[RMDB]
RNA sequence: GGGAACGACUCGAGUAGAGUCGAAAACUCGUUAGAGUCCAAAAAUGAUUAUGUCAAGAUAUCUGCCAUGAAGACAAUCCUGCGGGUCGUAAUUAACGGGGAUUCUCUUCCUUCCAUUUUAAUGCACGUGAUUCGAUUUGUAAUGCCUUCCAGAAAAUACCGUAUAGUCGUUCGCGACUAUACGGUAAAAAGAAACAACAACAACAAC
Reactivity to 2A3 in 0.01 (KOAc 150mM, MgCl2 10mM, bicine 150mM(pH8.5), 24C), signal-to-noise 2, nucleotides 027 to 156: c000u000c000g000u030u060a030g000a000g080u000c000c000a050a120a030a050a000u120g010a030u090u180a040u240g050u040c020a030a100g020a120u090a130u110c010u040g020c050c000a030u090g050a030a000g030a050c040a010a060u020c020c050u260g080c070g000g000g000u060c010g050u060a100a130u260u090a030a090c010g030g000g000g000a000u080u000c050u030c000u030u090c000c000u160u000c010c000a030u000u020u030u300a100a080u070g040c080a020c120g020u040g050a050u100u030c080g020a080u000u010u110g080u070a080a070u090g030c020c020u030u040c010c030a020g060a010a030a020a110